[RMDB]
RNA sequence: GGGAACGACUCGAGUAGAGUCGAAAACUCUCCGUCUACUUCGAACUUACCGACUUUGGCAAUUUCUUUGACAUUCGUGCCAGUGUCAAAGACUGGCGUACUGUUUUCUGGGAAGCCGACUUGCGGAGGAGCAUGAGUGGUUCGCCACUCAUGCUCCAAAAGAAACAACAACAACAAC
Reactivity to 2A3 in 0.01 (KOAc 150mM, MgCl2 10mM, bicine 150mM(pH8.5), 24C), signal-to-noise 3, nucleotides 027 to 126: c010u000c000u020c010c010g010u010c030u100a080c060u020u010c010g090a070a080c020u030u030a060c030c010g070a020c030u090u080u050g060g010c040a060a180u020u010u120c020u030u010u010g020a010c020a030u030u060c070g160u140g060c100c040a000g000u020g010u050c030a050a000a020g040a010c020u030g020g030c050g010u070a090c070u060g070u050u000u030u100c040u060g010g000g090a040a030g030c010c000g050a100c010u050u130g010c020g010g020a040
Source information:
Chemical mapping of a 177-nucleotide RNA with 2A3. Conditions: 150 mM KOAc, 10 mM MgCl2 and 150 mM bicine (pH 8.5), 24 C.